[RMDB]
RNA sequence: GGGAACGACUCGAGUAGAGUCGAAAAAGACGGAAACCCAUCGACUGUCACCAGAUGCUGCAUCACCUGAUCACUGAUAGCUCAACGGUAUCCGGCGGUACAACUGAAUACUUGUAGCUGCCUUUUGAAAAGGAGUUCAUCUUCGGAUGAACUCCAAUCUUAAUCGACAGUUCGCUGUCGAUUAAGAAAAAGAAACAACAACAACAAC
Reactivity to DMS in 0.01 (KOAc 150mM, MgCl2 10mM, bicine 150mM(pH8.5), 24C), signal-to-noise 2, nucleotides 027 to 156: a120g000a100c050g040g000a070a120a130c010c000c000a150u000c040g010a090c000u010g030u000c030a100c010c020a130g010a080u000g010c060u010g020c060a180u020c040a060c030c000u000g010a150u000c090a090c060u020g040a060u000a030g010c020u000c030a130a080c050g010g000u000a040u000c010c010g020g000c000g090g060u000a060c120a080a110c070u010g000a070a100u000a030c040u000u010g030u000a040g000c020u030g010c000c120u000u010u000u000g010a070a060a160a210g000g000a000g020u000u000c000a000u000c000u000u010c300g020g000a030u010g000a000a010c000u000c000c010a000a010
Reactivity to 2A3 in 0.01 (KOAc 150mM, MgCl2 10mM, bicine 150mM(pH8.5), 24C), signal-to-noise 5, nucleotides 027 to 156: a010g060a030c060g040g040a060a040a030c020c000c000a030u080c040g100a070c040u050g000u070c020a020c040c010a020g050a130u080g040c070u050g030c030a060u060c010a060c030c010u040g040a060u080c040a010c050u040g020a040u060a030g010c010u040c080a060a070c040g050g020u040a080u050c050c040g000g000c000g020g000u020a010c010a040a010c060u160g070a130a070u100a130c030u040u050g020u030a020g090c020u020g020c000c000u070u120u060u080g070a080a080a040a040g010g000a000g000u000u000c000a000u000c010u030u040c150g070g010a000u000g000a000a000c000u000c000c000a000a000